RNA sequence: GGGAACGACUCGAGUAGAGUCGAAAAUUCUCAGAAUCCAGCGAGAGGCGUGGAGAGAGGGCCGCGGUGCUCUGGAGUAGAGGCUCUGCCUUCGAAACACCAUCGAUCGUCCCUUCUUCUUUACCUCCUAUAUCUGUCUGUUCGCAGACAGAUAUAGAAAAGAAACAACAACAACAAC
Reactivity to DMS in 0.01 (KOAc 150mM, MgCl2 10mM, bicine 150mM(pH8.5), 24C), signal-to-noise 4, nucleotides 027 to 126: u000u000c010u010c010a200g010a140a070u010c080c100a090g000c150g000a110g000a030g010g020c190g030u000g000g010a020g000a040g000a030g000g000g010c130c020g010c020g000g000u000g010c010u000c010u010g000g010a060g010u010a060g000a020g020g020c010u020c230u010g010c010c010u010u010c000g000a150a150a120c010a000c170c000a020u000c010g000a150u010c020g000u000c000c000c000u010u000c020u000u000c010u000u000u010a110c030c010u000c030
Reactivity to 2A3 in 0.01 (KOAc 150mM, MgCl2 10mM, bicine 150mM(pH8.5), 24C), signal-to-noise 3, nucleotides 027 to 126: u030u010c020u000c010a030g150a080a100u120c100c050a040g080c120g110a160g000a000g110g030c060g050u060g030g000a000g000a000g040a020g000g010g000c020c010g000c000g000g000u010g000c000u000c000u000g020g010a010g000u010a010g000a010g010g000c040u080c170u300g030c030c010u140u140c010g000a000a000a000c020a040c080c020a000u010c000g030a300u020c020g010u000c010c010c010u010u010c010u000u000c010u020u060u050a050c010c000u000c000